RNA sequence: GGGAACGACUCGAGUAGAGUCGAAAAUGACAGUGAAUAGGCGCGAAAGCGUCUAGCAAUUAGCAAUGACUGUAUGCUAAUUGACUAUUGUGAAAACAAUAGUUUGCUGUCUAACAGUCAUUGAUACGAUCUACUUGUAUUUCGAUAUGGGUAGAUCAAAAGAAACAACAACAACAAC
Reactivity to DMS in 0.01 (KOAc 150mM, MgCl2 10mM, bicine 150mM(pH8.5), 24C), signal-to-noise 8, nucleotides 027 to 126: u010g000a000c010a000g020u000g000a010a030u000a000g000g000c000g010c010g010a070a050a100g000c000g000u000c000u000a000g000c000a000a000u000u000a000g000c000a000a020u010g000a010c010u000g020u000a190u010g000c000u000a000a000u000u000g000a110c000u000a000u000u000g000u000g000a150a060a140a020c000a010a000u000a000g000u000u000u000g000c000u000g010u000c000u010a080a040c000a010g000u000c000a170u040u020g010a140u030a100c210
Reactivity to 2A3 in 0.01 (KOAc 150mM, MgCl2 10mM, bicine 150mM(pH8.5), 24C), signal-to-noise 9, nucleotides 027 to 126: u050g000a000c000a000g000u000g010a010a000u000a000g000g000c000g000c000g030a040a030a020g000c000g000u000c000u000a000g000c000a000a000u000u000a000g000c000a000a010u030g000a000c000u000g000u000a010u030g000c000u000a000a000u000u000g000a000c000u000a000u000u000g010u010g080a020a010a000a000c000a000a000u000a000g000u000u000u000g000c000u000g000u000c000u000a020a000c000a000g000u000c000a020u030u230g080a040u050a050c080
Conditions: 150 mM KOAc, 10 mM MgCl2 and 150 mM bicine (pH 8.5), 24 C. Chemical mapping of a 177-nucleotide RNA with DMS and 2A3. The DMS profile rests on 51,184 reads.